RNA sequence: GGGAACGACUCGAGUAGAGUCGAAAAACUACGAGCAGUUUCUCUUAGUCGUUGCAUCGGGUGCUGUUGCCUUAAGCAUGUGUAUAUGGGGUUCGGGGGCUGUUGCCAUGAUAUAUAUGGAUGAGACCUCCGUAAUAACCUUCGGGUUAUUACGGAGAAAAGAAACAACAACAACAAC
Reactivity to DMS in 0.01 (KOAc 150mM, MgCl2 10mM, bicine 150mM(pH8.5), 24C), signal-to-noise 1, nucleotides 027 to 126: a060c070u010a070c030g000a030g030c170a060g000u000u000u010c020u000c050u000u000a080g000u010c030g020u000u010g000c050a070u000c110g010g020g020u000g000c080u000g020u020u010g020c020c050u020u010a100a140g010c050a050u030g010u010g000u010a060u010a080u020g010g010g010g000u000u000c090g000g010g000g030g010c040u010g020u010u000g000c030c010a010u000g000a100u000a080u020a140u000a050u010g000g040a190u010g010a110g000a150c090